[RMDB]
RNA sequence: GGGAACGACUCGAGUAGAGUCGAAAACGGACCGCUGGGUCCACCUCUCGCUGUGUAUAAGACAGCUUACCUGAAGCGCGCACGGGUAAGCAAUGACGUACAUGUGCGAUGUGGACCUGUGCUGAAGCGCGCACGGCAACCGAAAGGUGCGACAGAACCAAAGUUGCUAGUUCGCUAGCAACUUUGGAAAAGAAACAACAACAACAAC
Reactivity to 2A3 in 0.01 (KOAc 150mM, MgCl2 10mM, bicine 150mM(pH8.5), 24C), signal-to-noise 1, nucleotides 027 to 156: c000g060g110a100c090c020g000c000u030g030g000g030u000c020c000a010c010c050u020c000u040c000g000c000u010g050u010g020u030a020u010a100a090g120a150c080a060g010c000u020u000a000c010c000u050g010a220a110g000c000g010c010g000c010a020c020g000g000g040u020a000a000g000c010a030a300u080g000a010c000g000u020a000c000a020u090g100u110g150c000g000a030u230g000u000g000g000a000c000c000u000g000u010g000c020u020g030a140a030g000c000g000c000g000c000a000c020g020g000c020a000a040c000c030g090a120a060a000g000g000u030g050c020g050a060c050a090g180a110a020

The record gives the reactivity of an RNA of 207 nucleotides to 2A3. 2A3 adducts were read by reverse transcription with SuperScript II with manganese. The reactions ran in a buffer of 150 mM KOAc, 10 mM MgCl2 and 150 mM bicine (pH 8.5), at 24 C. Reactivities are given for positions 27 through 156. The 2A3 profile rests on 950 reads.